[RMDB]
RNA sequence: GGGAACGACUCGAGUAGAGUCGAAAACGUCCCCGUCGUACAGAAUGGUAACAUAUCUCUCCAAAUAUCUGAGCUUGGGUAUACGGGCAAACCCAACCCCUUGGGAAGAUUGGGUAUAUGGCUAAAUUACAUCGAUUGUACUUCGGUACAAUCGAAAGUUUAGAUAAGCGUUCGCGCUUAUCUAAACAAAAGAAACAACAACAACAAC
Reactivity to DMS in 0.01 (KOAc 150mM, MgCl2 10mM, bicine 150mM(pH8.5), 24C), signal-to-noise 1, nucleotides 027 to 156: c010g000u010c010c020c000c030g060u010c060g010u020a230c100a080g010a160a050u000g010g000u000a110a130c040a080u010a080u000c040u000c050u000c040c030a040a110a200u000a090u000c060u000g020a270g030c020u000u010g010g010g010u000a110u010a110c100g030g000g000c070a070a120a140c010c000c000a000a090c030c010c000c040u010u000g040g000g000a100a010g020a110u010u000g010g030g000u010a030u000a080u000g020g000c070u000a040a080a110u010u000a090c090a180u000c010g000a040u000u000g020u000a010c000u000u000c240g000g000u000a000c000a000a000u000c000g010a000a020a080
Reactivity to 2A3 in 0.01 (KOAc 150mM, MgCl2 10mM, bicine 150mM(pH8.5), 24C), signal-to-noise 5, nucleotides 027 to 156: c060g080u030c010c010c010c030g160u140c020g040u090a100c050a120g130a130a150u120g040g030u120a170a010c010a020u070a050u000c100u010c030u040c090c030a120a120a070u210a100u040c030u030g000a020g080c000u010u020g010g010g000u040a020u010a060c030g020g020g020c080a130a090a250c000c010c000a000a040c010c000c000c010u010u040g020g000g020a020a000g010a040u030u050g010g000g010u030a030u010a000u020g030g000c030u090a110a120a100u180u120a080c050a080u020c000g010a010u000u000g000u000a000c000u020u030c130g070g000u000a000c000a000a000u000c000g000a030a010a000